[RMDB]
RNA sequence: GGGAACGACUCGAGUAGAGUCGAAAACGAUGCACGAGAGUGCAUCGAGCUGACGUGAGUCAGCAAAGGUAGGAAGACGAUCGCAGGCAAAUGAAGCCCCUACCGACAGCGUCACACAUGAGCGUGAGCUCUAGUGACGCAGUCAAUGCGACGUCAACCCAUCAGGGGCAUUCGUGCCCCUGAUGGGAAAAGAAACAACAACAACAAC
Reactivity to 2A3 in 0.01 (KOAc 150mM, MgCl2 10mM, bicine 150mM(pH8.5), 24C), signal-to-noise 1, nucleotides 027 to 156: c020g000a000u000g010c000a000c020g090a090g010a000g130u010g050c000a010u000c040g000a000g000c010u000g030a010c030g070u100g090a050g010u020c000a000g000c000a000a080a000g020g010u030a000g000g040a060a070g070a030c010g050a250u040c010g000c000a000g010g010c010a050a060a090u210g040a060a060g000c000c010c000c000u000a000c050c000g010a000c010a000g000c000g000u000c000a000c000a010c000a140u130g000a000g000c020g030u180g080a050g030c000u000c000u000a010g000u000g000a000c000g000c000a000g000u000c000a010a010u010g000c010g000a010c000g000u020c000a030a070
An RNA of 207 nucleotides, treated with 2A3 and read out base by base.
Reactivities are given for positions 27 through 156.